[RMDB]
RNA sequence: GGGAACGACUCGAGUAGAGUCGAAAAUUGCCGAUCAGGCUGUGUUGUGCCGGGGGCGAAACAGGAUCGACAAGGGUGUAAAGAUCGCUCUUUUACUCGGCAUGAUACCACCGUUAUCGGGUCAACAAAAAGAAUAUGUGGUUCGCCACAUAUUCAAGAUGCUUUUUUUCUUCGGAAAAAAAGCAUCAAAAGAAACAACAACAACAAC
Reactivity to DMS in 0.01 (KOAc 150mM, MgCl2 10mM, bicine 150mM(pH8.5), 24C), signal-to-noise 1, nucleotides 027 to 156: u020u010g030c010c010g000a000u010c200a260g010g030c050u010g020u010g030u000u010g040u010g000c070c000g020g060g030g000g010c020g010a010a070a180c060a180g040g010a110u020c010g000a050c120a080a070g040g020g000u000g010u010a090a300a120g020a080u000c020g000c070u000c040u050u010u010u000a060c050u000c000g000g000c000a040u000g000a040u000a020c010c110a010c010c010g020u010u000a010u010c020g000g020g060u000c060a070a180c090a090a000a130a160a160g030a030a000u000a000u000g010u030g010g020u000u000c280g000c000c000a010c010a010u000a030u000u000c010a020a070
Reactivity to 2A3 in 0.01 (KOAc 150mM, MgCl2 10mM, bicine 150mM(pH8.5), 24C), signal-to-noise 2, nucleotides 027 to 156: u060u050g080c010c010g000a020u020c060a030g010g010c020u020g010u000g000u000u000g010u000g030c000c010g010g000g020g000g070c110g000a010a040a020c140a070g100g030a050u060c040g040a010c100a090a080g120g040g020u120g060u150a130a150a030g040a080u080c020g030c020u030c000u010u090u020u030a060c000u010c000g000g000c000a000u000g000a000u020a010c000c050a030c000c020g120u080u060a010u000c000g070g000g000u140c030a070a090c040a060a100a020a040a010g000a000a000u000a000u000g010u010g030g040u050u070c160g000c040c000a000c000a000u000a000u040u000c000a000a000
The data come from the RNA Mapping Database (RMDB), library M2RFPK. Chemical mapping of a 207-nucleotide RNA with DMS and 2A3. Reactivities are given for positions 27 through 156. DMS adducts were read by reverse transcription with MarathonRT. Conditions: 150 mM KOAc, 10 mM MgCl2 and 150 mM bicine (pH 8.5), 24 C.